[RMDB]
RNA sequence: GGGAACGACUCGAGUAGAGUCGAAAAGUUAGAGUGGCAUAAUUCGCGCUUGAGCUCUGCUCGCGCAAGUAAGCUCCGUUUUGUAUUGCCUGAUGUGCUUAGCGGGUAUUUAUUCGGGAUAGUAAGUUGAACGUUACAAGUGUCGUACCAACUUAUGCGAUGUUUGAAUGUUCGCAUUCAAACAUCGAAAAGAAACAACAACAACAAC
Reactivity to 2A3 in 0.01 (KOAc 150mM, MgCl2 10mM, bicine 150mM(pH8.5), 24C), signal-to-noise 4, nucleotides 027 to 156: g090u100u120a040g010a030g070u060g060g000c060a060u120a150a130u240u110c080g010c010g000c070u060u200g020a000g010c040u020c140u300g000c000u010c040g000c000g000c000a010a040g050u080a060a020g010c030u000c020c010g000u030u020u090u090g070u040a060u010u140g040c020c010u050g030a080u070g040u050g010c020u010u040a000g010c000g000g050g020u030a120u010u130u010a070u030u070c020g000g000g020a020u030a060g060u020a030a060g010u010u020g030a060a030c070g000u030u060a040c090a140a080g060u040g030u150c020g000u010a060c020c020a010a030c000u030u010a040u150g040
Reactivity to DMS in 0.01 (KOAc 150mM, MgCl2 10mM, bicine 150mM(pH8.5), 24C), signal-to-noise 2, nucleotides 027 to 156: g040u000u010a070g000a080g030u000g020g110c060a120u000a050a110u000u010c070g000c080g020c020u000u000g020a070g000c010u000c110u000g060c040u000c060g020c040g020c040a020a060g020u000a060a150g020c000u000c030c050g010u000u000u020u010g030u000a070u000u000g040c000c030u000g010a090u020g010u000g000c010u010u000a070g010c060g040g000g020u010a000u000u010u000a060u000u000c040g000g040g020a120u000a110g020u010a040a040g020u000u000g010a060a060c030g000u010u000a190c090a090a060g000u010g000u050c020g000u000a100c040c010a030a160c040u000u000a050u000g030